[RMDB]
Structure probing data (2A3 and DMS) for a 207-nucleotide construct. It was measured as part of the RMDB library M2RFPK. Values cover nucleotides 27 to 156. In probing experiments dimethyl sulfate is read out at A N1 and C N3, which are open when not base-paired.

RNA sequence: GGGAACGACUCGAGUAGAGUCGAAAAAUACAUUUCUGUGCCGGCAAUACAGUGUGUAUGGAGGUCUCAAUGGCUCGGAAGUGCCAGCAAACCGGCGUAGAUAUUAGCAGACGUAUGGGCGUAAGACAAAAGAGAAUGAUGUUCGCAUCAUUCUCAACCAUAUCUCAUCGUUCGCGAUGAGAUAUGGAAAAGAAACAACAACAACAAC
Reactivity to 2A3 in 0.01 (KOAc 150mM, MgCl2 10mM, bicine 150mM(pH8.5), 24C), signal-to-noise 6, nucleotides 027 to 156: a000u130a020c050a030u080u060u000c000u000g040u020g010c010c020g040g030c080a040a030u080a080c050a080g110u060g020u020g020u240a040u060g020g020a030g020g040u030c050u020c080a080a170u120g010g000c040u040c110g070g030a120a030g020u020g040c000c000a020g020c040a030a040a070c020c010g000g000c010g010u020a020g020a020u060a040u060u140a020g040c040a010g030a100c040g060u090a080u120g050g050g000c020g010u020a020a050g080a060c060a060a070a030a020g010a000g010a000a000u000g000a000u010g020u040u070c180g030c070a000u000c010a000u000u010c000u010c000a000a000
Reactivity to DMS in 0.01 (KOAc 150mM, MgCl2 10mM, bicine 150mM(pH8.5), 24C), signal-to-noise 2, nucleotides 027 to 156: a080u010a090c020a120u000u000u000c040u000g030u000g040c000c010g000g010c020a110a120u000a030c020a080g030u000g040u000g000u000a040u010g030g000a090g040g000u010c040u010c060a100a160u010g010g030c000u010c060g040g000a130a110g030u010g000c020c020a090g000c050a020a110a030c010c000g000g020c030g030u000a050g010a110u000a030u000u000a050g000c040a050g010a080c070g020u000a060u010g000g010g020c040g010u000a070a080g000a090c060a070a030a070a120g000a030g000a020a010u000g020a020u000g000u000u010c250g010c020a020u000c010a010u000u000c000u010c000a010a030